[RMDB]
RNA sequence: GGGAACGACUCGAGUAGAGUCGAAAAAGCAACGUUUGGCUGGACGUGAAGGUCCGGUUCGUGUGCUGGUAGUGGGUGGUUCUCAGGGCGCACGCAUUCUUAACCAGACAAUGCCGCAGGUUGCUGCAUCCUCUGAAAGCUUCGGCUUUCAGAGGAUAAAAGAAACAACAACAACAAC
Reactivity to 2A3 in 0.01 (KOAc 150mM, MgCl2 10mM, bicine 150mM(pH8.5), 24C), signal-to-noise 1, nucleotides 027 to 126: a020g030c000a000a010c020g040u040u050u150g080g030c040u000g000g020a000c020g100u150g300a220a000g090g010u000c010c010g000g020u050u050c030g000u100g010u040g080c000u010g070g020u060a070g050u020g030g110g030u040g060g000u160u000c040u000c070a080g050g000g000c060g050c020a040c030g010c000a050u090u040c010u070u070a030a030c000c000a000g020a010c000a050a080u090g010c000c020g000c020a030g130g040u060u050g030c030u000g000c000
Reactivity to DMS in 0.01 (KOAc 150mM, MgCl2 10mM, bicine 150mM(pH8.5), 24C), signal-to-noise 2, nucleotides 027 to 126: a030g010c010a020a020c090g000u000u010u010g010g030c020u010g020g000a020c010g040u010g000a220a160g020g000u010c000c020g000g010u000u010c040g010u000g010u000g000c020u010g030g050u000a060g040u000g000g010g010u000g010g010u000u000c050u010c130a150g000g000g010c030g010c070a030c090g010c120a060u000u010c090u000u010a100a080c000c060a090g000a040c070a050a150u010g010c040c070g000c070a070g000g000u010u000g010c010u000g000c160